[RMDB]
RNA sequence: GGGAACGACUCGAGUAGAGUCGAAAAGCGGGGCUUGAAGCGCGGGUAGCGCGCACGCCCGGCGAAGAAGUUCGCAUACGCGGUGUGCUGGUGCCGAAGUGUCUGCUGCAACGGCACGCUCGACACCUAGAACAUACCGUAUUCGUACGGUAUGUAAGAUAAUUUAACCGUUCGCGGUUAAAUUAUCAAAAGAAACAACAACAACAAC
Reactivity to 2A3 in 0.01 (KOAc 150mM, MgCl2 10mM, bicine 150mM(pH8.5), 24C), signal-to-noise 4, nucleotides 027 to 156: g020c040g020g010g020g000c020u090u090g090a150a020g000c030g000c030g000g060g130u220a090g100c020g010c000g000c010a010c030g000c000c000c000g000g000c030g000a040a020g060a040a050g070u080u070c040g000c060a050u060a180c080g010c080g100g010u020g000u020g030c050u050g020g030u000g000c010c010g010a090a050g030u030g040u070c090u140g080c040u070g000c040a070a030c030g000g000c000a000c020g000c050u020c010g010a010c010a000c000c020u020a040g030a090a000c000a000u000a000c010c000g010u000a010u010u080c190g050u020a000c000g020g000u000a000u010g020u020a030a010
Reactivity to DMS in 0.01 (KOAc 150mM, MgCl2 10mM, bicine 150mM(pH8.5), 24C), signal-to-noise 2, nucleotides 027 to 156: g000c020g010g010g070g040c040u000u000g000a120a150g020c010g040c000g060g050g040u010a170g010c000g020c010g000c020a090c070g020c010c000c000g000g040c010g000a030a210g000a130a210g000u000u000c030g000c030a140u000a140c050g010c060g020g020u000g030u000g020c010u020g010g020u000g020c010c010g000a030a160g010u000g030u000c040u010g020c080u010g000c120a130a210c110g000g020c010a030c000g040c040u000c010g010a090c010a030c000c050u010a140g000a180a060c020a000u000a020c010c000g000u000a020u000u000c300g030u000a020c010g020g000u000a010u010g000u000a020a100